[RMDB]
RNA sequence: GGGAACGACUCGAGUAGAGUCGAAAACAGCUACGUUUCGACGUAGCUGAAAAUAAAACAGGCAAGUACCAGCCUGAAAAAGGUACAAAGAUCGUAAGAUCAAAACGGUUCGAUUCGUCGAACCGAACAGUUCACUUCAGUUCGCUGAAGUGAACUGAAAAGAAACAACAACAACAAC
Reactivity to 2A3 in 0.01 (KOAc 150mM, MgCl2 10mM, bicine 150mM(pH8.5), 24C), signal-to-noise 2, nucleotides 027 to 126: c000a000g000c010u000a000c010g000u010u040u140c210g090a020c000g000u000a010g000c000u000g000a000a010a000a000u090a010a080a000a030c160a020g000g000c020a100a060g010u020a010c000c020a050g000c010c000u000g020a020a000a010a000a000g000g000u000a020c010a020a150a000g030a010u020c020g050u100a040a060g000a020u010c030a010a040a000a040c000g000g020u010u020c010g000a020u010u040c120g050u000c000g070a000a000c000c000g000a050a010
Reactivity to DMS in 0.01 (KOAc 150mM, MgCl2 10mM, bicine 150mM(pH8.5), 24C), signal-to-noise 2, nucleotides 027 to 126: c000a000g000c010u000a000c000g020u000u000u010c280g010a050c000g010u000a000g030c000u000g000a000a050a050a050u020a080a040a180a150c160a000g020g000c020a050a190g000u000a010c020c000a100g010c000c010u010g000a020a030a000a110a090g000g010u010a000c010a210a140a120g010a010u010c000g000u000a050a140g000a000u010c000a090a050a020a150c000g020g000u000u000c010g000a000u000u010c160g030u000c000g000a010a030c020c000g000a010a050
Overview: The record gives the reactivity of an RNA of 177 nucleotides to 2A3 and DMS. For DMS the reverse transcriptase was MarathonRT. The DMS profile rests on 1,243 reads. It was measured as part of the RMDB library M2PK50. The RNA was probed in 150 mM KOAc, 10 mM MgCl2 and 150 mM bicine (pH 8.5) at 24 C. The 2A3 profile rests on 3,327 reads. 2A3 adducts were read by reverse transcription with SuperScript II with manganese. Reactivities are given for positions 27 through 126.